[RMDB]
RNA sequence: GGGAACGACUCGAGUAGAGUCGAAAACCCGUUUUGUUCGCAAAACGGGACUCAUCUUUGCUUGGCAGCAUAGCUGGUGUUGGCUGGACUGCUGGCUUAUCCUUGGAGGCAGUUUCGACUGCCUCAAAUUGAACACUAUGUUCGCAUAGUGUUCAAUAAAAGAAACAACAACAACAAC
Reactivity to 2A3 in 0.01 (KOAc 150mM, MgCl2 10mM, bicine 150mM(pH8.5), 24C), signal-to-noise 6, nucleotides 027 to 126: c000c000c000g000u000u010u000u000g020u010u050c180g000c090a000a000a000a010c000g000g000g030a050c030u020c060a250u050c090u070u140u080g020c020u080u200g050g000c000a010g000c000a090u080a080g000c020u040g030g200u210g150u300u300g070g000c010u010g020g060a150c000u010g000c010u010g000g000c010u020u100a150u130c020c040u030u100g160g010a010g000g000c000a010g010u010u050u120c140g070a020c010u030g030c000c000u010c010a000a000
Reactivity to DMS in 0.01 (KOAc 150mM, MgCl2 10mM, bicine 150mM(pH8.5), 24C), signal-to-noise 9, nucleotides 027 to 126: c000c000c000g010u000u000u000u000g010u000u010c200g030c010a000a000a010a010c000g010g000g010a090c090u000c140a110u010c120u010u000u000g000c010u000u010g030g000c020a020g010c110a130u000a020g010c010u000g010g030u010g010u000u010g010g010c010u000g010g010a170c010u000g000c000u000g000g000c010u000u000a050u000c060c060u000u010g030g010a030g010g010c000a010g000u000u000u010c170g010a030c000u000g000c000c000u000c000a000a030
Chemical mapping of a 177-nucleotide RNA with 2A3 and DMS. DMS adducts were read by reverse transcription with MarathonRT. For 2A3, 9,768 sequencing reads were counted. The DMS profile rests on 36,883 reads.